[RMDB]
This 177-nucleotide RNA was probed chemically with 2A3 and DMS.
RNA sequence: GGGAACGACUCGAGUAGAGUCGAAAAUCUUUUGCAAACAGUCCCGCUCAAAGAAGAAGGGGGCAGAUAUUAAGUCCACAUAUAUUUGUGGGCGCACAAAUAUGUCGGGGCGCAGAAGCAAAAUGUGGGAUAAUAUAUUUUUCGAAAUAUAUUAUCCAAAAGAAACAACAACAACAAC
Reactivity to 2A3 in 0.01 (KOAc 150mM, MgCl2 10mM, bicine 150mM(pH8.5), 24C), signal-to-noise 9, nucleotides 027 to 126: u030c030u010u050u020u050g020c020a070a090a070c020a070g030u020c000c000c000g020c020u030c030a280a270a140g140a080a050g050a030a100g090g020g000g020g000c020a020g090a080u110a070u120u180a120a030g000u000c010c000a010c010a010u120a010u050a100u160u110u010g000u000g000g020g010c010g010c010a020c020a030a120a020u110a030u110g070u090c030g010g010g000g000c030g000c050a030g030a090a010g000c040a030a020a050a060u200g050u150g070
Reactivity to DMS in 0.01 (KOAc 150mM, MgCl2 10mM, bicine 150mM(pH8.5), 24C), signal-to-noise 5, nucleotides 027 to 126: u020c030u010u000u010u000g000c010a120a130a140c110a200g010u000c000c000c010g040c060u010c070a070a120a120g000a140a090g010a070a090g020g020g010g010g040c060a100g000a090u030a030u010u020a090a140g020u000c000c010a030c020a010u010a120u030a090u020u000u010g010u010g000g010g020c080g020c170a050c150a030a050a060u010a010u010g030u010c060g030g000g010g030c050g010c070a050g000a070a060g010c110a050a040a070a010u020g020u020g000
Overview:
Conditions: 150 mM KOAc, 10 mM MgCl2 and 150 mM bicine (pH 8.5), 24 C. Values are in units of 0.01, from 0 to 300, in steps of 10. The DMS profile rests on 7,761 reads.